[RMDB]
RNA sequence: GGGAACGACUCGAGUAGAGUCGAAAAUGCGGGUUGGCGCUGACCCGGAAGGCGUGCCGGGCCUAAGGCAUGUCGCGGGCAGGCUGGUGAUGGUCGAUCUGGAUGCCGACCCCGAGGUGCUCGCAGCUAUACUGAACUAAUUCGUUAGUUCAGUAUAAAAAGAAACAACAACAACAAC
Reactivity to 2A3 in 0.01 (KOAc 150mM, MgCl2 10mM, bicine 150mM(pH8.5), 24C), signal-to-noise 9, nucleotides 027 to 126: u120g010c070g000g010g000u060u060g050g020c080g020c110u060g180a300c000c000c010g030g040a150a050g020g000c020g010u010g000c000c000g080g050g070c030c070u140a100a040g010g000c010a010u030g020u030c090g010c020g210g000g000c010a020g040g020c020u060g020g060u140g040a160u140g030g070u050c030g010a120u040c050u110g130g030a070u150g030c020c000g010a030c000c000c000c010g020a040g040g050u080g010c010u010c020g020c030a030g010c010
Reactivity to DMS in 0.01 (KOAc 150mM, MgCl2 10mM, bicine 150mM(pH8.5), 24C), signal-to-noise 9, nucleotides 027 to 126: u030g010c090g010g000g010u010u010g000g000c020g020c020u000g000a180c010c000c010g000g020a110a070g000g000c010g020u000g010c000c000g000g010g020c130c120u020a090a130g000g000c020a020u010g010u000c000g000c020g000g000g010c050a050g010g010c010u000g000g010u020g010a140u020g010g010u010c040g000a120u020c060u020g010g010a110u020g010c030c000g010a060c020c000c010c010g010a060g010g010u020g000c020u000c020g020c070a090g010c140